[RMDB]
RNA sequence: GGGAACGACUCGAGUAGAGUCGAAAACAGCAUCAUCUAACAGUCGCAUUGGUUCUGGUAUUCGUCGCCAGUGGCGACCAUCGUGCUCGGCAUUAAUGACCGGUUUAGAAUUUUGCGUUAAAGGCAGGCUACUUAGUGAGUUCGCUCACUAAGUAGCAAAAGAAACAACAACAACAAC
Reactivity to 2A3 in 0.01 (KOAc 150mM, MgCl2 10mM, bicine 150mM(pH8.5), 24C), signal-to-noise 4, nucleotides 027 to 126: c010a010g000c010a020u010c000a010u010c030u050a030a050c010a070g060u040c010g030c060a040u040u090g060g000u110u060c010u030g050g010u050a100u070u120c080g030u000c030g030c030c010a120g110u070g090g030c010g000a010c030c000a050u080c020g020u020g000c030u040c020g040g000c020a000u000u090a100a100u110g050a110c000c020g000g040u050u080u090a070g060a120a130u110u110u060u110g010c020g010u020u100a100a050a010g120g010c030a010g010
Reactivity to DMS in 0.01 (KOAc 150mM, MgCl2 10mM, bicine 150mM(pH8.5), 24C), signal-to-noise 4, nucleotides 027 to 126: c050a110g000c020a030u010c040a040u000c020u000a060a060c070a110g010u000c070g010c060a070u000u000g010g010u000u020c030u010g030g020u000a080u010u000c170g000u000c060g030c010c000a110g010u010g030g040c000g010a040c020c110a060u000c230g010u000g010c030u000c070g020g000c030a070u000u000a040a070u010g010a080c060c040g020g010u010u000u000a060g010a080a110u000u010u000u000g010c030g000u000u010a060a090a160g010g020c080a100g010
This 177-nucleotide RNA was probed chemically with 2A3 and DMS. Reactivities are given for positions 27 through 126. The RNA was probed in 150 mM KOAc, 10 mM MgCl2 and 150 mM bicine (pH 8.5) at 24 C. DMS adducts were read by reverse transcription with MarathonRT.